Overview
This 170-nucleotide RNA was probed chemically with DMS and 2A3. The DMS profile rests on 52,353 reads. For 2A3, 122,090 sequencing reads were counted. The reactions ran in a buffer of 150 mM KOAc, 10 mM MgCl2 and 150 mM bicine (pH 8.5), at 24 C. Values cover nucleotides 27 to 129.

[RMDB]
RNA sequence: GGGAACGACUCGAGUAGAGUCGAAAAACGUUGAUAUGGAUUUACUCCGAGGAGACGAACUACCACGAACAGGGGAAACUCUACCCGUGGCGUUUCCGUUUGACGAGUAAGUCCUAAGUCAACAUGCGCACCUCUAUGUUCGCAUAGAGGAAAAGAAACAACAACAACAAC
Reactivity to DMS in 0.01 (KOAc 150mM, MgCl2 10mM, bicine 150mM(pH8.5), 24C), signal-to-noise 9, nucleotides 027 to 129: a060c080g020u010u000g020a000u000a040u070g040g000a020u010u000u000a000c020u040c000c000g020a030g040g020a020g030a020c020g010a080a040c020u160a290c080c000a030c030g020a050a210c120a170g030g020g000g000a000a000a000c020u050c000u000a100c220c210c000g020u000g000g010c000g000u020u030u010c000c000g060u110u080u060g000a200c300g000a010g020u060a010a020g000u060c030c000u000a010a050g010u000c010a010a010c030a030u080g000c130g050c150a100
Reactivity to 2A3 in 0.01 (KOAc 150mM, MgCl2 10mM, bicine 150mM(pH8.5), 24C), signal-to-noise 3, nucleotides 027 to 129: a000c080g000u000u000g000a000u000a000u030g000g000a000u000u000u000a010c000u000c000c000g020a050g000g000a000g040a000c010g010a020a020c090u260a090c090c000a000c000g020a050a020c030a080g000g000g000g000a000a000a000c000u000c000u010a020c010c010c010g000u000g000g000c000g000u000u000u000c000c000g020u200u150u100g010a000c000g000a000g000u000a000a000g000u000c000c000u000a000a000g000u000c000a000a000c010a010u120g070c090g020c020a050